[RMDB]
RNA sequence: GGGAACGACUCGAGUAGAGUCGAAAACAUGGUAUGGCCUCGCAUCCGGCCUACCGACAGAAUCAACAACUUGGGAUGCGGUGGGCGAGAGCCCUAAGAAGGAGUCUCCGCGCCUGGGGAGCUCCGUAUGACUUAAUGUAUUACCAGGCGUAUACAAAUUAAUCGAUGCAUUCGUGCAUCGAUUAAUAAAAGAAACAACAACAACAAC
Reactivity to 2A3 in 0.01 (KOAc 150mM, MgCl2 10mM, bicine 150mM(pH8.5), 24C), signal-to-noise 1, nucleotides 027 to 156: c010a020u090g000g000u070a100u230g030g010c010c000u040c000g020c000a000u000c000c000g000g000c000c000u000a000c000c000g010a020c020a040g210a050a140u270c070a090a100c020a060a040c030u140u080g000g000g000a000u000g000c070g010g040u070g000g020g000c000g000a030g000a010g060c000c000c000u000a020a070g000a010a030g000g010a000g020u080c030u000c090c000g090c040g000c010c020u060g000g000g000g000a000g030c000u000c000c000g000u010a060u030g010a000c020u190u170a170a040u190g060u230a120u050u120a030c000c010a000g000g000c000g010u000a050u000a010c040a000a180